[RMDB]
RNA sequence: GGGAACGACUCGAGUAGAGUCGAAAAACGGCGGCCCCAAGUCCGGCAAAUCCACUGCGCUGCAGACAUUCAUCCUCUCAGCUGCUAGCCUGCACUCGCCGCACGAGGUUAGCUUCUAUUGCCUGGAUCAUCACUAAAGCUUCGGCUUUAGUGAUGAAAAAGAAACAACAACAACAAC
Reactivity to 2A3 in 0.01 (KOAc 150mM, MgCl2 10mM, bicine 150mM(pH8.5), 24C), signal-to-noise 1, nucleotides 027 to 126: a000c060g070g000c030g050g030c040c000c020c000a060a030g020u000c010c020g010g040c010a000a000a170u050c050c000a070c070u050g000c090g030c060u090g040c150a030g070a100c030a060u140u150c000a070u150c000c010u050c000u030c030a020g010c010u030g000c020u020a000g010c010c000u040g000c010a030c040u040c040g030c020c000g020c010a050c040g050a020g030g000u050u020a030g000c000u070u060c060u110a130u120u110g050c000c000u000g010g020a020
Reactivity to DMS in 0.01 (KOAc 150mM, MgCl2 10mM, bicine 150mM(pH8.5), 24C), signal-to-noise 2, nucleotides 027 to 126: a080c040g000g010c030g020g000c020c030c010c060a100a130g010u000c060c060g000g010c030a030a110a070u000c050c070a100c060u000g010c110g020c040u010g000c030a060g010a090c110a110u020u020c030a070u010c040c050u000c040u000c080a110g020c050u000g040c020u000a050g000c010c030u000g020c070a080c060u000c080g010c040c010g020c100a130c100g020a030g000g010u000u000a020g000c000u000u000c070u010a040u010u010g030c020c010u000g000g010a260
An RNA of 177 nucleotides, treated with 2A3 and DMS and read out base by base. Values cover nucleotides 27 to 126. 2A3 adducts were read by reverse transcription with SuperScript II with manganese. The RNA was probed in 150 mM KOAc, 10 mM MgCl2 and 150 mM bicine (pH 8.5) at 24 C. The 2A3 profile rests on 1,560 reads. For DMS, 1,606 sequencing reads were counted.